The record gives the reactivity of an RNA of 177 nucleotides to DMS and 2A3. The data come from the RNA Mapping Database (RMDB), library OK1LIB. The 2A3 profile rests on 652 reads.
RNA sequence: GGGAACGACUCGAGUAGAGUCGAAAACUAAAUAUGAUAACGAUGUCAGAGCAACGAAUAUGAAUGGCGUACAAUUCCGUUCAGAAACACUGUCUGGAAACUCUGUCCGUAAAACAACAACCGGCAGUCCCCACCUUUUUUUCGAAAAAGGUGGGGAAAAAGAAACAACAACAACAAC
Reactivity to DMS in 0.01 (KOAc 150mM, MgCl2 10mM, bicine 150mM(pH8.5), 24C), signal-to-noise 2, nucleotides 027 to 126: c060u010a000a110a120u040a140u000g000a120u010a110a200c080g000a140u010g030u000c000a010g000a090g000c020a030a190c130g000a000a000u000a100u000g000a060a000u000g000g000c300g000u040a080c300a150a140u040u000c060c000g050u000u000c000a000g030a140a000a060c160a030c000u000g030u070c000u000g000g000a140a140a100c080u000c000u010g000u000c050c010g000u030a120a000a040a030c280a080a070c110a090a080c100c060g000g000c000a050g000
Reactivity to 2A3 in 0.01 (KOAc 150mM, MgCl2 10mM, bicine 150mM(pH8.5), 24C), signal-to-noise 2, nucleotides 027 to 126: c000u040a000a060a080u300a080u230g140a270u170a170a000c060g100a080u070g070u150c020a000g000a000g010c020a000a020c000g000a090a140u050a180u080g020a000a060u030g000g000c050g000u020a110c140a020a120u190u010c060c000g040u000u000c000a000g120a080a050a020c090a050c040u090g020u030c050u080g070g000a010a000a130c000u000c040u100g050u080c000c070g150u140a030a130a030a000c010a020a000c000a000a020c000c020g010g000c000a000g000